[RMDB]
RNA sequence: GGGAACGACUCGAGUAGAGUCGAAAAUCUUAGUUCGCUAAGAAAGGAGGGGUCGAGCUGUGGGACAUGCUCUGAUCUGAAGCCUCCACGGAUUCUAAGAGCAACAGCCGUAACAUCAGCUCGACGGAGGCACCCAUGAGUCACUGUUCGCAGUGAAGCCCUCAACUAAAUUCGUUUAGUUGAGGGCAAAAGAAACAACAACAACAAC
Reactivity to 2A3 in 0.01 (KOAc 150mM, MgCl2 10mM, bicine 150mM(pH8.5), 24C), signal-to-noise 4, nucleotides 027 to 156: u030c000u010u000a010g020u090u090c200g020c100u020a030a030g030a160a080a020g130g060a100g010g100g010g000u010c000g000a000g010c000u000g000u040g080g020g080a050c070a180u120g000c000u000c010u020g000a000u000c000u000g060a070a000g000c000c000u020c000c000a010c020g000g030a000u210u020c090u300a230a050g000a000g010c020a010a130c050a180g280c090c080g130u170a040a020c000a030u090c010a000g000c010u000c000g000a000c000g010g010a000g000g000c000a050c010c010c010a050u120g080a020g120u020c010a010c000u020g080u120u170c270g020c170a010g090u240g000a140a100
Reactivity to DMS in 0.01 (KOAc 150mM, MgCl2 10mM, bicine 150mM(pH8.5), 24C), signal-to-noise 1, nucleotides 027 to 156: u010c000u000u000a000g050u000u000c300g030c030u000a020a050g000a050a070a130g030g000a190g020g010g000g030u000c030g020a010g030c010u030g000u000g030g030g030a110c120a150u010g010c010u000c010u040g010a120u010c020u000g010a030a150g010c050c020u000c020c020a300c100g000g000a050u000u000c130u000a060a040g000a010g070c010a050a160c100a150g030c060c070g000u000a080a110c020a160u020c000a060g000c030u000c000g000a030c010g000g000a020g050g060c010a140c000c010c020a130u000g030a170g000u000c000a030c000u000g010u050u000c270g000c010a060g010u000g010a110a210

An RNA of 207 nucleotides, treated with 2A3 and DMS and read out base by base. DMS adducts were read by reverse transcription with MarathonRT. For 2A3, 2,260 sequencing reads were counted. 2A3 is a SHAPE reagent: it acylates the 2'-hydroxyl of flexible nucleotides of all four kinds. Values cover nucleotides 27 to 156. Conditions: 150 mM KOAc, 10 mM MgCl2 and 150 mM bicine (pH 8.5), 24 C. For 2A3 the reverse transcriptase was SuperScript II with manganese.